[RMDB]
RNA sequence: GGGAACGACUCGAGUAGAGUCGAAAAUCAAGAAUUCAGCGACGAACCCGCAGAAGCACACGCCGUAGCCUUGAAAAUCAAGCAGCUUCUAGCACAAGGCGUUCCUGCCUCCGAGAUUGCGAUUUUGUACCGCAUUAAUGCCCAAUCCGCGACUUUACCCCUAAAAUGAGUUCGCUCAUUUUAGGGGAAAAGAAACAACAACAACAAC
Reactivity to 2A3 in 0.01 (KOAc 150mM, MgCl2 10mM, bicine 150mM(pH8.5), 24C), signal-to-noise 1, nucleotides 027 to 156: u090c020a040a040g030a040a010u160u060c070a020g000c030g100a000c010g050a110a080c030c040c040g000c060a000g000a120a010g000c000a040c030a020c100g020c000c020g010u070a040g000c030c000u070u070g120a190a090a000a110u240c070a120a010g020c030a000g010c000u050u020c050u060a030g020c040a020c040a120a000g000g000c030g020u060u050c020c020u030g050c010c000u010c010c000g040a050g000a050u090u080g010c000g030a010u020u050u060u240g120u160a120c020c060g010c010a000u060u100a070a030u050g010c000c020c020a070a020u070c080c030g030c030g100a010c010u020u030u160a150